Record summary
Chemical mapping of a 177-nucleotide RNA with 2A3 and DMS. It was measured as part of the RMDB libraries RFM100 and RFMREP.
RNA sequence: GGGAACGACUCGAGUAGAGUCGAAAAAGAGCCACGGUGUACGCACCGUGGCUCAUAACACCCCUUUGUCCAACCAGCUGCCACGUCCUGUAACCAAAAGUGACCGGGAUGAGUGUCUGGCUCCCAACCAUUGGGAGAAAUUCGUUUCUCCCAAUGGAAAAGAAACAACAACAACAAC
Reactivity to 2A3 in 0.01 (KOAc 150mM, MgCl2 10mM, bicine 150mM(pH8.5), 24C), signal-to-noise 3, nucleotides 027 to 126: a000g020a000g000c000c000a010c030g020g000u030g040u080a090c300g030c110a000c010c010g000u000g010g000c000u000c000a000u010a000a000c010a040c000c000c010c020u020u110u150g060u050c040c010a060a060c000c000a070g050c090u040g040c050c030a120c050g020u020c010c010u030g020u060a040a040c010c030a020a060a030a100g040u050g040a070c110c030g010g000g030a040u030g040a030g040u040g020u000c040u010g020g000c020u030c010c000c000a050a060
Reactivity to DMS in 0.01 (KOAc 150mM, MgCl2 10mM, bicine 150mM(pH8.5), 24C), signal-to-noise 3, nucleotides 027 to 126: a090g000a030g020c000c000a100c000g060g080u000g000u020a110c270g020c000a010c000c030g050u000g010g000c000u000c010a000u020a050a100c150a080c060c000c000c140u000u010u000g000u010c030c060a110a120c030c030a060g020c070u010g000c040c010a110c010g020u000c040c020u010g030u010a160a090c030c040a050a060a120a260g010u000g010a130c270c000g000g010g010a060u010g010a120g010u000g000u000c040u000g000g010c070u000c000c020c030a160a250
Conditions: 150 mM KOAc, 10 mM MgCl2 and 150 mM bicine (pH 8.5), 24 C.